[RMDB]
RNA sequence: GGGAACGACUCGAGUAGAGUCGAAAACGGUCGCCACGGCUGGGGCGUUGAGUUAGUUUCGGAAACAGCCUCAAUACCAUACGUAAGUGUUACACGAGAGACUGCGCCAGAGGCGAUAUGCUUAGCGGCAUUGAUUGCGGUAUUGACCGGAGAGGAGACCAAGAGGGAAUUUCGAUUCCCUCUUGGUAAAAGAAACAACAACAACAAC
Reactivity to 2A3 in 0.01 (KOAc 150mM, MgCl2 10mM, bicine 150mM(pH8.5), 24C), signal-to-noise 2, nucleotides 027 to 156: c000g030g030u050c010g030c020c000a070c040g030g000c020u050g040g000g010g010c060g000u030u110g040a060g000u000u090a040g020u040u000u050c090g000g060a030a090a050c050a020g000c020c010u020c000a020a030u040a030c010c020a070u020a150c050g020u030a080a080g110u050g100u170u110a020c050a010c070g050a070g000a000g080a090c070u070g020c080g040c070c060a080g060a090g110g010c000g000a070u020a070u120g010c000u010u070a040g030c080g040g000c010a020u030u090g040a140u060u080g080c040g000g000u020a000u040u050g050a050c020c090g000g050a040g000a030g050g110a080g000
Reactivity to DMS in 0.01 (KOAc 150mM, MgCl2 10mM, bicine 150mM(pH8.5), 24C), signal-to-noise 2, nucleotides 027 to 156: c040g040g010u000c010g010c050c080a080c020g040g000c000u020g000g010g060g030c100g010u000u000g000a140g020u010u000a120g040u000u000u000c060g050g000a200a090a070c050a060g010c070c000u000c010a050a040u000a080c010c010a120u000a070c050g020u000a090a040g030u000g020u000u000a130c000a110c050g000a190g010a070g020a070c020u000g010c040g010c050c040a180g010a110g040g030c030g000a060u000a030u000g000c000u000u000a070g040c080g000g080c050a110u000u000g010a010u010u030g030c010g000g000u010a030u000u010g000a030c030c050g000g000a180g010a090g020g000a220g010

Structure probing data (2A3 and DMS) for a 207-nucleotide construct. The RNA was probed in 150 mM KOAc, 10 mM MgCl2 and 150 mM bicine (pH 8.5) at 24 C. It was measured as part of the RMDB library OK3TST.